[RMDB]
RNA sequence: GGGAACGACUCGAGUAGAGUCGAAAAUUGCUCUUAUUGUUAAUAGCUGUAUAUUUGAUAUCAGUUCACGGAUAGCUAAGUACAGUAUCUGACAUGAAAGAAUAAUUCAGAAUCCGUGGGUCAAGAAUCUGAAUAAAUGAAUACCUUAGAAAAGGAAUACGUAAAUUUAGUUCGCUAAAUUUACGUAAAAAGAAACAACAACAACAAC
Reactivity to 2A3 in 0.01 (KOAc 150mM, MgCl2 10mM, bicine 150mM(pH8.5), 24C), signal-to-noise 4, nucleotides 027 to 156: u110u060g020c010u010c010u070u120a130u090u050g000u030u040a070a060u040a150g020c020u010g060u020a030u020a070u090u100u080g040a030u030a040u080c020a060g120u200u130c100a060c080g040g000a000u000a030g020c050u050a050a020g020u010a020c000a020g020u020a060u010c070u040g010a010c000a040u070g050a090a080a020g040a050a070u100a120a030u040u020c010a010g010a020a010u000c010c030g040u080g020g080g040u060c040a040a020g010a050a020u000c010u020g010a030a040u080a130a070a020u060g030a040a040u120a190c010c000u040u040a060g110a050a180a000a010g020g000a030a040
Reactivity to DMS in 0.01 (KOAc 150mM, MgCl2 10mM, bicine 150mM(pH8.5), 24C), signal-to-noise 3, nucleotides 027 to 156: u000u000g010c020u000c060u010u000a190u000u010g020u000u000a060a120u010a160g060c000u010g010u000a020u000a150u000u000u010g010a040u000a020u000c020a050g020u000u000c240a110c080g010g010a020u000a030g010c020u000a030a130g010u000a020c010a020g020u000a070u000c100u010g030a060c030a070u000g020a140a090a120g020a120a100u000a070a070u000u000c010a030g000a090a100u000c020c010g040u010g020g030g030u000c050a070a070g010a040a080u000c010u020g000a030a030u000a060a090a110u010g000a120a090u010a080c000c020u000u000a120g000a080a090a060a040g000g010a140a300